[RMDB]
RNA sequence: GGGAACGACUCGAGUAGAGUCGAAAAGCUUAAUAACCUGCGCUGAGCCCUUCUCCCCCAGCUUGCCUGUGUCCUAGGUAAUUGGAAGGUCAUCCUUCACAGGAUCGUGUGGAAGUCCUGCUCGGGGUCCAAACAUGGUAAUUCGUUACCAUGUUAACUCACAUCUUAACUUCGGUUAAGAUGUGAGAAAAGAAACAACAACAACAAC
Reactivity to DMS in 0.01 (KOAc 150mM, MgCl2 10mM, bicine 150mM(pH8.5), 24C), signal-to-noise 2, nucleotides 027 to 156: g030c030u010u000a100a100u010a060a070c050c020u010g020c020g010c030u000g020a110g000c040c010c090u000u000c060u000c020c010c000c010c020a140g000c040u000u000g000c020c010u000g020u010g020u000c090c040u010a090g020g020u000a040a110u000u030g000g000a070a110g020g010u010c100a090u000c020c000u000u010c090a050c040a020g030g020a040u010c040g010u020g040u000g020g040a140a140g000u000c000c030u000g020c060u000c070g030g000g070g020u000c020c050a100a020a030c000a000u000g000g000u000a010a080u000u000c300g010u000u000a020c000c000a010u000g010u020u000a050a120
Reactivity to 2A3 in 0.01 (KOAc 150mM, MgCl2 10mM, bicine 150mM(pH8.5), 24C), signal-to-noise 2, nucleotides 027 to 156: g010c020u150u120a070a030u080a140a170c020c040u110g080c110g000c060u050g060a040g000c000c020c000u100u010c100u040c020c000c000c000c000a000g000c000u040u080g010c000c010u040g000u030g030u110c000c040u030a020g000g050u020a090a090u070u060g050g030a060a010g010g030u120c030a130u190c020c010u060u040c030a020c020a060g030g010a020u090c040g040u090g000u020g150g020a070a040g010u000c010c010u010g000c010u010c010g020g000g000g000u040c020c010a060a040a000c000a000u000g010g020u010a010a030u040u050c120g040u050u000a000c000c000a000u000g000u000u000a000a020
Source: RMDB library M2RFPK, as collected in RNAgym. Structure probing data (DMS and 2A3) for a 207-nucleotide construct. The reactions ran in a buffer of 150 mM KOAc, 10 mM MgCl2 and 150 mM bicine (pH 8.5), at 24 C. For 2A3 the reverse transcriptase was SuperScript II with manganese. The DMS profile rests on 4,820 reads.